[RMDB]
RNA sequence: GGGAACGACUCGAGUAGAGUCGAAAAUCAGAUGCAAUACUUCAUUCUUCCUAGUGCAUGAGUAAUUCAUAUCCACUAUUUGCUCCCUCUUUUACAAAUUGGAGGAUGGCGAUGCAGAUGGAAGAUGCGGAACACACUUGUUCGCAAGUGUGUUCCGAAAAGAAACAACAACAACAAC
Reactivity to DMS in 0.01 (KOAc 150mM, MgCl2 10mM, bicine 150mM(pH8.5), 24C), signal-to-noise 2, nucleotides 027 to 126: u000c120a130g020a170u010g020c090a080a020u020a070c090u050u000c040a160u000u000c020u000u010c010c000u000a120g000u000g010c190a010u000g020a110g030u000a120a050u020u000c080a090u010a070u000c150c050a070c150u000a060u000u000u000g000c040u000c090c000c030u000c020u000u000u000u000a240c160a030a080a090u000u010g020g000a030g000g010a010u010g040g020c080g010a010u020g000c050a070g000a110u000g010g020a030a000g000a020u000g000
Reactivity to 2A3 in 0.01 (KOAc 150mM, MgCl2 10mM, bicine 150mM(pH8.5), 24C), signal-to-noise 2, nucleotides 027 to 126: u110c030a010g040a120u070g100c070a110a080u030a250c040u040u120c020a100u070u000c000u000u010c000c020u020a030g100u000g100c000a040u020g000a020g090u230a210a090u170u000c030a010u100a070u160c070c010a030c030u050a020u040u030u080g000c000u020c020c000c000u020c040u040u130u000u010a060c060a050a200a140u110u060g010g000a020g030g020a030u100g010g000c070g000a000u080g020c010a000g000a190u090g040g000a030a000g010a010u060g040